[RMDB]
RNA sequence: GGGAACGACUCGAGUAGAGUCGAAAAGUUCGCAUGGUGCACUAUUGUGUUAUUAGUAACUAAGUAAGCUUACAAUCGAAAAGGUUUAACCAUAAAAGGGUAAAAUGGUGUAAGACAGUCUGAUACUUUACGGCUUCACGUUUCGACGUGAAGCCAACCUCAAUGUAUCGUUCGCGAUACAUUGAGGAAAAGAAACAACAACAACAAC
Reactivity to DMS in 0.01 (KOAc 150mM, MgCl2 10mM, bicine 150mM(pH8.5), 24C), signal-to-noise 1, nucleotides 027 to 156: g000u000u010c020g080c080a200u000g000g000u020g000c050a050c040u000a050u000u000g030u000g020u020u040a090u020u000a100g010u010a000a060c050u000a100a150g020u020a060a030g000c010u000u010a020c040a100a100u000c030g000a030a080a070a070g000g050u000u010u000a080a050c030c030a060u000a030a060a080a080g000g020g010u010a000a100a100a050u010g010g060u040g030u000a060a090g000a060c060a080g010u000c050u000g010a150u010a070c050u000u000u000a140c060g020g000c010u020u000c010a000c000g020u010u010u000c170g000a060c010g000u000g010a020a000g050c000c000a010a020
Reactivity to 2A3 in 0.01 (KOAc 150mM, MgCl2 10mM, bicine 150mM(pH8.5), 24C), signal-to-noise 2, nucleotides 027 to 156: g070u110u130c060g020c060a050u050g050g000u030g020c020a010c030u070a150u140u120g030u020g010u070u030a060u080u020a040g080u050a050a010c030u010a070a060g040u020a040a000g060c000u000u050a030c020a060a150u050c090g100a010a010a020a050g030g000u070u050u060a020a000c000c010a010u050a050a150a010a020g050g020g030u070a000a000a100a050u100g030g010u030g040u030a020a030g010a070c030a060g020u060c060u030g020a050u070a190c030u110u130u050a090c120g000g000c000u020u000c010a000c000g040u080u100u130c160g100a020c000g000u000g020a000a000g000c000c000a000a000
This 207-nucleotide RNA was probed chemically with DMS and 2A3. Source: RMDB library M2RFPK, as collected in RNAgym. For DMS the reverse transcriptase was MarathonRT. Values cover nucleotides 27 to 156. The RNA was probed in 150 mM KOAc, 10 mM MgCl2 and 150 mM bicine (pH 8.5) at 24 C.